Chemical mapping of a 177-nucleotide RNA with DMS and 2A3. 2A3 adducts were read by reverse transcription with SuperScript II with manganese. The data come from the RNA Mapping Database (RMDB), library OK2TST.
RNA sequence: GGGAACGACUCGAGUAGAGUCGAAAAUACUUUUUUAGUAUCAUCAUUUAGCUUCAUUGCACGAGUUGAUGAACCUUUGGUUAAUACUCCAAGUGUAUCCAGCUUUUGGCUUGUACCAUCCGUAUAAAGCCAUCUGUUUAUUCGUAAACAGAUGGCUAAAAGAAACAACAACAACAAC
Reactivity to DMS in 0.01 (KOAc 150mM, MgCl2 10mM, bicine 150mM(pH8.5), 24C), signal-to-noise 2, nucleotides 027 to 126: u000a050c010u000u010u000u000u010u000a070g000u000a030u000c050a080u000c010a040u020u010u010a060g010c020u000u010c140a140u000u000g000c060a060c130g000a060g000u010u000g000a080u000g000a030a110c050c040u000u020u000g000g020u010u000a060a060u000a040c080u020c040c170a050a030g030u000g020u000a050u020c060c090a060g010c070u000u000u010u010g000g010c050u000u000g000u000a070c030c030a070u000c110c030g010u000a060u010a050a130
Reactivity to 2A3 in 0.01 (KOAc 150mM, MgCl2 10mM, bicine 150mM(pH8.5), 24C), signal-to-noise 1, nucleotides 027 to 126: u040a020c060u120u120u120u030u060u160a000g000u000a010u030c020a000u000c000a060u080u070u110a000g020c000u110u020c060a100u040u260g000c020a010c140g080a030g020u000u030g090a070u030g050a060a030c000c000u040u040u070g020g000u000u090a060a000u030a130c040u000c060c090a080a070g040u010g040u130a050u050c000c040a000g000c010u070u130u130u130g090g000c000u010u030g010u010a000c020c000a060u130c030c030g130u020a050u080a090a080